RNA sequence: GGGAACGACUCGAGUAGAGUCGAAAAGAGAAUCAACACUAGGUAUUUAUGUCGAGUCAAUUACUGCCUAAGCGUAGACCAAGUAGGUACAAGAAGACGCGAUGGGACAGAACCAUUUGACCUAAGCACUUCCAAGCAAAUUCGUUUGCUUGGAAGUAAAAGAAACAACAACAACAAC
Reactivity to DMS in 0.01 (KOAc 150mM, MgCl2 10mM, bicine 150mM(pH8.5), 24C), signal-to-noise 6, nucleotides 027 to 126: g000a110g010a120a070u010c070a100a060c100a070c110u020a070g000g010u010a060u030u020u010a040u030g000u010c060g010a110g000u010c040a080a080u020u030a100c050u000g000c000c010u010a060a270g000c010g010u000a070g000a060c020c020a130a120g010u040a080g020g010u000a090c110a140a160g020a110a100g000a040c020g010c020g010a110u030g010g000g000a060c050a030g000a100a090c120c120a070u000u010u000g000a040c020c020u020a050a110g010c160
Reactivity to 2A3 in 0.01 (KOAc 150mM, MgCl2 10mM, bicine 150mM(pH8.5), 24C), signal-to-noise 9, nucleotides 027 to 126: g090a010g040a020a090u140c060a090a060c050a040c110u110a050g110g010u100a260u120u160u040a100u150g150u090c060g030a050g020u020c020a030a050u110u040a120c010u020g000c000c000u050a050a020g000c000g020u030a010g020a040c010c000a090a080g120u120a150g170g010u080a140c040a090a080g140a090a030g100a110c000g010c010g020a080u300g010g000g060a070c000a010g030a030a020c050c010a060u030u020u100g030a010c000c010u040a080a010g050c020